[RMDB]
RNA sequence: GGGAACGACUCGAGUAGAGUCGAAAAGCCUAACAGUUCGCUGUUAGGCAAAUGCACAGUCUUCGCAACUGUGAAAAACACAACAGAAGUGUCUAUGCGAGGAUCGUUGCGUCUUCGGACGCAACAACGAGCUAUGUCCAUUCGUGGACAUAGCUCGAAAAGAAACAACAACAACAAC
Reactivity to DMS in 0.01 (KOAc 150mM, MgCl2 10mM, bicine 150mM(pH8.5), 24C), signal-to-noise 3, nucleotides 027 to 126: g020c000c000u000a000a000c000a000g010u010u020c280g020c010u010g020u000u000a000g010g010c020a000a020a020u000g020c080a040c080a120g010u000c010u000u000c060g000c020a140a080c100u000g020u010g000a010a050a070a110a080c030a030c050a090a090c220a140g000a100a090g000u010g010u000c090u010a130u000g010c020g020a060g020g000a030u000c180g000u000u000g000c000g010u000c000u000u010c130g020g000a010c020g000c010a020a000c010a090a080
Reactivity to 2A3 in 0.01 (KOAc 150mM, MgCl2 10mM, bicine 150mM(pH8.5), 24C), signal-to-noise 5, nucleotides 027 to 126: g000c000c000u000a010a000c000a000g040u090u090c130g070c140u010g000u000u010a000g000g000c000a040a020a010u060g000c010a020c010a040g010u000c020u030u020c070g000c030a070a090c080u060g000u060g100a070a000a000a000a000c060a020c040a150a070c040a100g140a300a040g200u040g030u100c050u100a070u070g000c010g000a000g010g040a070u120c090g000u000u010g000c000g000u000c000u020u030c160g090g000a000c000g000c000a010a000c000a010a010